[RMDB]
RNA sequence: GGGAACGACUCGAGUAGAGUCGAAAAGAUGGUGACCUGAGGCUCCCUGGCUGUCACUCUGUCCCAGGCCCGUCCUGGCCGCGGGCACAGGCUGAGUCGCAGUAGAGUCUGUGGGGUCCUGACCCAAGUAUGUAUUAGGCUUCGGCCUAAUACAUACAAAAGAAACAACAACAACAAC
Reactivity to 2A3 in 0.01 (KOAc 150mM, MgCl2 10mM, bicine 150mM(pH8.5), 24C), signal-to-noise 9, nucleotides 027 to 126: g070a030u170g010g090u150g110a170c000c010u030g050a020g010g000c000u020c030c030c040u050g200g030c010u020g030u090c010a010c010u010c000u020g070u090c000c000c010a040g040g010c010c000c000g030u080c030c140u100g080g010c050c020g000c020g000g000g000c010a010c000a010g030g000c000u020g000a010g010u030c040g010c010a000g010u080a050g000a000g020u000c010u040g170u150g020g010g010g040u030c000c010u040g060a070c000c000c000a020a030
Reactivity to DMS in 0.01 (KOAc 150mM, MgCl2 10mM, bicine 150mM(pH8.5), 24C), signal-to-noise 8, nucleotides 027 to 126: g000a130u010g000g020u040g010a100c010c010u000g010a040g000g000c000u000c030c300c210u030g000g010c010u000g010u000c300a020c010u010c010u000g010u030c010c000c160a270g000g010c010c000c020g000u010c080c060u000g010g010c090c150g000c020g000g010g010c020a020c030a160g000g010c020u000g000a020g000u000c270g010c010a020g020u000a080g010a030g010u000c000u000g020u010g020g000g000g000u000c000c010u010g000a150c010c000c010a050a150
Chemical mapping of a 177-nucleotide RNA with 2A3 and DMS. For 2A3 the reverse transcriptase was SuperScript II with manganese. The reactions ran in a buffer of 150 mM KOAc, 10 mM MgCl2 and 150 mM bicine (pH 8.5), at 24 C. It was measured as part of the RMDB libraries RFM100 and RFMREP.